[RMDB]
RNA sequence: GGGAACGACUCGAGUAGAGUCGAAAAGCAAGAUUGAAACUUGAAGAAAUUGACGGAAGGACACCACCAGGAGUGGAGUGUGCGGCUUAAUUUGACUCAACGCGGGACAACUUACCAGGGCCAGUUGGAUAUCAUAGGGGUUCGCCCCUAUGAUAUCAAAAGAAACAACAACAACAAC
Reactivity to DMS in 0.01 (KOAc 150mM, MgCl2 10mM, bicine 150mM(pH8.5), 24C), signal-to-noise 2, nucleotides 027 to 126: g020c020a070a020g000a120u010u000g010a120a140a050c040u000u030g000a090a090g000a060a070a080u010u010g020a100c080g000g020a090a040g000g000a090c090a060c040c010a070c030c060a120g000g000a140g050u000g010g010a120g020u000g010u000g000c040g000g050c040u000u010a050a050u020u010u000g000a070c040u010c040a080a030c070g000c020g000g050g020a080c070a060a050c070u010u030a090c050c010a060g000g000g030c060c020a020g000u000u000g000
Reactivity to 2A3 in 0.01 (KOAc 150mM, MgCl2 10mM, bicine 150mM(pH8.5), 24C), signal-to-noise 2, nucleotides 027 to 126: g050c010a000a010g010a100u090u160g070a200a040a040c040u090u030g030a120a070g070a070a230a080u150u100g040a030c030g000g030a060a070g020g000a010c000a010c050c010a070c020c040a050g050g040a100g090u040g020g030a050g020u090g050u080g080c000g000g000c000u060u060a020a030u050u060u140g020a000c000u000c040a090a020c000g020c010g050g020g000a020c020a010a010c020u070u090a070c010c000a010g020g030g050c000c000a010g020u120u080g120

An RNA of 177 nucleotides, treated with DMS and 2A3 and read out base by base.